[RMDB]
RNA sequence: GGGAACGACUCGAGUAGAGUCGAAAAAUGUUUACAUGUACGUAAACAGAUACAAAUAUAUAUACAUAUGCAGAUGCUUAUGCAUUAUGUGUAUUGUGCUCCAUACAUGUUUUUUCAAAACUAAAAGGACGUAGCUACGUUUCGACGUAGCUACGUCAAAAGAAACAACAACAACAAC
Reactivity to 2A3 in 0.01 (KOAc 150mM, MgCl2 10mM, bicine 150mM(pH8.5), 24C), signal-to-noise 2, nucleotides 027 to 126: a000u000g000u000u000u000a050c110a190u140g110u110a020c150g000u000a010a010a010c000a000g050a020u230a050c020a020a120a000u100a000u020a000u000a000u020a050c000a000u000a000u020g000c050a030g000a160u190g050c080u240u150a090u090g000c020a000u160u050a010u080g000u000g000u000a000u020u050g080u110g000c070u000c000c010a000u080a120c080a080u180g140u020u040u000u050u000u040c110a100a100a100a090c050u130a120a000a050a130g090